[RMDB]
RNA sequence: GGGAACGACUCGAGUAGAGUCGAAAAAUGAUAUGGCUUUUAGAAAUCGAAGACAUGUGCUGAUCACAGUUGAACUCAAACCUGGGGUUGAAUAUGAUGAGAGUGAUUUUACUAAAAAUCAGCGAUACAGACGAGGUAAAUUCGUUUACCUCGUCUGAAAAGAAACAACAACAACAAC
Reactivity to DMS in 0.01 (KOAc 150mM, MgCl2 10mM, bicine 150mM(pH8.5), 24C), signal-to-noise 3, nucleotides 027 to 126: a070u000g010a120u000a000u000g010g010c010u000u010u000u000a070g000a050a070a130u010c140g010a060a050g010a040c020a020u000g050u010g030c070u000g010a030u000c040a090c200a050g010u000u000g000a070a060c030u000c040a050a090a090c080c060u000g000g010g000g010u010u010g020a060a090u000a080u010g040a050u010g010a210g020a090g000u000g000a090u000u010u000u000a050c070u000a020a050a030a050a020u000c020a030g000c040g010a120u010a090
Reactivity to 2A3 in 0.01 (KOAc 150mM, MgCl2 10mM, bicine 150mM(pH8.5), 24C), signal-to-noise 1, nucleotides 027 to 126: a000u100g000a110u090a050u100g080g000c060u010u020u100u190a100g050a020a190a000u060c080g030a010a040g060a060c040a030u080g030u070g020c010u020g030a010u020c010a050c020a070g000u060u050g060a030a000c010u010c000a010a060a050c030c010u080g080g050g030g000u070u060g040a040a000u150a080u190g080a040u090g020a060g010a000g070u010g000a040u110u070u050u090a060c040u030a000a040a000a080a040u000c000a000g000c000g020a040u130a090
This 177-nucleotide RNA was probed chemically with DMS and 2A3. 2A3 adducts were read by reverse transcription with SuperScript II with manganese. The RNA was probed in 150 mM KOAc, 10 mM MgCl2 and 150 mM bicine (pH 8.5) at 24 C. For DMS, 2,088 sequencing reads were counted.